[RMDB]
RNA sequence: GGGAACGACUCGAGUAGAGUCGAAAAAUCAUGGUUCUUACUCCGCAGGUGCAAUGCUGGCCGGGGCUAGCAUGGCUUCCGGUUUGCUGUCGGGUUCAGGCCCGGCCUUGAUGGCGCGCAGCAUCAACGCUUUUAAUACUUUCGAGUAUUAAAAGCGAAAAGAAACAACAACAACAAC
Reactivity to 2A3 in 0.01 (KOAc 150mM, MgCl2 10mM, bicine 150mM(pH8.5), 24C), signal-to-noise 4, nucleotides 027 to 126: a000u140c080a070u090g060g020u070u050c020u050u060a060c030u020c040c020g010c040a030g080g000u050g030c030a050a080u070g010c020u030g010g000c010c010g030g010g040g000c010u030a040g140c070a100u110g010g030c010u300u080c010c010g030g050u030u060u110g020c010u010g030u020c010g030g010g000u040u140c070a070g010g140c010c000c000g020g000c000c020u050u190g050a060u080g050g020c020g000c010g000c050a020g020c000a020u090c030a020a070
Reactivity to DMS in 0.01 (KOAc 150mM, MgCl2 10mM, bicine 150mM(pH8.5), 24C), signal-to-noise 5, nucleotides 027 to 126: a090u000c070a090u000g010g010u000u000c040u010u000a140c080u000c030c040g020c100a100g000g010u000g030c070a100a050u000g010c030u010g010g020c000c020g010g000g000g010c010u010a090g040c170a100u010g000g010c020u000u010c020c030g020g000u000u000u010g010c030u000g010u000c030g010g000g010u000u000c190a130g010g010c000c010c010g000g010c000c040u000u000g010a050u000g010g000c040g030c140g020c060a040g020c030a050u010c130a080a160

Notes: Structure probing data (2A3 and DMS) for a 177-nucleotide construct. Values cover nucleotides 27 to 126. It was measured as part of the RMDB library OK2TST. 2A3 adducts were read by reverse transcription with SuperScript II with manganese. The reactions ran in a buffer of 150 mM KOAc, 10 mM MgCl2 and 150 mM bicine (pH 8.5), at 24 C.